RNA sequence: GGGAACGACUCGAGUAGAGUCGAAAACAGCGCAUCGGAGUCCAGAAUCUCUCGAUGGCGGGUCAUCGCACCCAGCCGAACCAGGUUGGGAUUGUUGAUUCCGCCGACCACGACGUAGCCGAGUUCGGGACGUAACCAGAUUCGUCUGGUUACGUCCAAAAGAAACAACAACAACAAC
Reactivity to 2A3 in 0.01 (KOAc 150mM, MgCl2 10mM, bicine 150mM(pH8.5), 24C), signal-to-noise 3, nucleotides 027 to 126: c080a030g040c010g000c010a000u030c040g030g020a000g080u000c060c020a040g090a130a130u050c000u020c020u040c070g090a050u090g010g010c000g000g000g030u030c010a020u070c020g000c030a030c000c000c000a010g000c000c010g030a150a140c110c030a100g000g000u010u000g010g000g000a080u030u230g030u020u140g010a010u300u080c000c000g000c010c000g020a020c010c030a090c100g040a000c040g050u080a020g040c020c000g030a070g050u100u100c060g020
Reactivity to DMS in 0.01 (KOAc 150mM, MgCl2 10mM, bicine 150mM(pH8.5), 24C), signal-to-noise 1, nucleotides 027 to 126: c030a070g000c050g000c060a000u000c030g000g010a050g000u000c000c050a060g000a120a150u000c010u020c010u000c020g080a130u010g050g020c000g000g000g000u000c080a000u000c140g030c170a080c000c020c000a000g010c020c000g060a130a170c290c150a050g010g010u030u000g000g000g000a110u000u090g000u000u030g000a010u000u000c000c020g000c010c000g000a040c020c030a180c130g010a040c050g040u000a170g060c090c010g000a050g000u020u010c070g170

An RNA of 177 nucleotides, treated with 2A3 and DMS and read out base by base.
It was measured as part of the RMDB library OK1LIB.
DMS adducts were read by reverse transcription with MarathonRT.
2A3 adducts were read by reverse transcription with SuperScript II with manganese.
Conditions: 150 mM KOAc, 10 mM MgCl2 and 150 mM bicine (pH 8.5), 24 C.